[RMDB]
RNA sequence: GGGAACGACUCGAGUAGAGUCGAAAAGGGCGAUGUCUCCUAACCUUUAUCAAUGGGGGCACUCGGUCGUGCUGUGGGUAGAAAUUUUAUUUCGUGCCUACCUUAGACGCUUGUCGUCGGGAGUAUGUGGGACUGAUGAACUUCGGUUCAUCAGUAAGAGUAACCUCAUCUUCGGAUGAGGUUACUCAAAAGAAACAACAACAACAAC
Reactivity to 2A3 in 0.01 (KOAc 150mM, MgCl2 10mM, bicine 150mM(pH8.5), 24C), signal-to-noise 2, nucleotides 027 to 156: g000g040g020c080g020a010u010g000u030c000u000c000c010u020a090a130c020c000u100u140u160a170u130c160a110a080u060g000g000g000g000g010c000a030c050u020c020g090g040u010c010g000u020g000c060u120g010u040g010g000g000u030a000g180a010a020a010u150u270u180u170a170u060u140u090c000g010u080g010c000c000u030a050c010c000u050u080a080g000a000c000g010c080u200u260g100u300c030g030u000c000g000g020g040a080g010u150a100u110g050u150g000g000g030a000c000u010g000a000u000g010a000a000c010u090u070c130g070g000u010u000c000a000u020c000a000g000u000a000a040
Conditions: 150 mM KOAc, 10 mM MgCl2 and 150 mM bicine (pH 8.5), 24 C.
Structure probing data (2A3) for a 207-nucleotide construct.
Reactivities are given for positions 27 through 156.